[RMDB]
RNA sequence: GGGAACGACUCGAGUAGAGUCGAAAAUGGCCGAGCCGGAACGGAAUGCGCCGGCCUUCGCCAAGGCCUUGAUCUGGUCCUGGACGACGGCGUGAUCGAAUACCAGGCCGAUGCGACCCAGGGCGGCGGCCGAACUAAAGUUCGCUUUAGUUCGGCCAAAAGAAACAACAACAACAAC
Reactivity to DMS in 0.01 (KOAc 150mM, MgCl2 10mM, bicine 150mM(pH8.5), 24C), signal-to-noise 2, nucleotides 027 to 126: u010g000g010c010c060g020a160g010c000c000g000g000a070a130c060g040g010a090a130u010g010c300g030c010c010g020g010c000c080u010u010c230g020c010c040a090a110g030g030c010c010u000u000g030a070u010c070u000g010g010u000c010c000u000g020g010a160c050g020a130c010g010g000c040g000u000g000a050u010c040g000a170a120u010a140c050c020a020g010g000c000c000g000a080u010g000c050g020a210c040c010c000a060g000g000g010c060g030g020c300
Reactivity to 2A3 in 0.01 (KOAc 150mM, MgCl2 10mM, bicine 150mM(pH8.5), 24C), signal-to-noise 3, nucleotides 027 to 126: u050g010g000c030c030g030a020g000c020c010g050g000a060a030c020g030g300a300a120u290g040c060g000c040c010g020g000c020c020u040u060c010g000c010c010a030a030g060g000c010c000u040u130g090a120u040c100u150g060g000u050c000c010u000g010g030a040c020g010a010c000g010g090c170g060u070g020a100u100c100g100a120a040u100a210c030c020a010g060g000c010c000g020a040u100g070c000g040a080c040c000c000a010g000g030g010c020g000g060c070
Annotation:
An RNA of 177 nucleotides, treated with DMS and 2A3 and read out base by base. The DMS profile rests on 1,660 reads. The data come from the RNA Mapping Database (RMDB), library OK2TRN. Values cover nucleotides 27 to 126.